[RMDB]
RNA sequence: GGGAACGACUCGAGUAGAGUCGAAAACCCGGGCGCUCCCCUCGGAGAUCCACUGGGUGGGUUCACAUCCCCAACCCGCGGGCCGGCUGUUCUUCUUUCUCUUUCCUCGUCUUCCUCGGUCAACCUCGACCUACUAUAUGUUCGCAUAUAGUAGGUCAAAAGAAACAACAACAACAAC
Reactivity to 2A3 in 0.01 (KOAc 150mM, MgCl2 10mM, bicine 150mM(pH8.5), 24C), signal-to-noise 1, nucleotides 027 to 126: c000c000c000g010g050g020c050g040c000u030c000c020c020c000u000c010g030g010a030g010a070u020c020c020a030c120u120g010g020g020u020g000g030g020u070u100c100a050c010a140u060c000c000c000c010a090a120c010c010c020g030c010g010g010g030c030c000g010g020c040u020g030u040u020c020u060u010c000u040u070u030c020u000c000u050u050u010c010c020u030c020g020u010c040u050u030c010c010u030c020g010g010u020c010a030a020c020c010u020c030
Reactivity to DMS in 0.01 (KOAc 150mM, MgCl2 10mM, bicine 150mM(pH8.5), 24C), signal-to-noise 3, nucleotides 027 to 126: c010c000c010g020g000g000c050g000c050u000c020c020c040c080u010c070g000g020a090g000a080u000c020c030a070c080u010g020g010g020u000g010g000g020u010u000c150a090c150a150u000c080c010c010c050a070a090c030c010c020g020c090g030g010g020c050c030g010g010c050u000g000u000u000c030u000u000c030u000u010u010c050u000c020u010u000u000c030c010u000c040g010u000c010u000u000c050c010u000c020g000g010u000c050a080a220c070c010u000c160
Structure probing data (2A3 and DMS) for a 177-nucleotide construct. The 2A3 profile rests on 1,954 reads. The RNA was probed in 150 mM KOAc, 10 mM MgCl2 and 150 mM bicine (pH 8.5) at 24 C.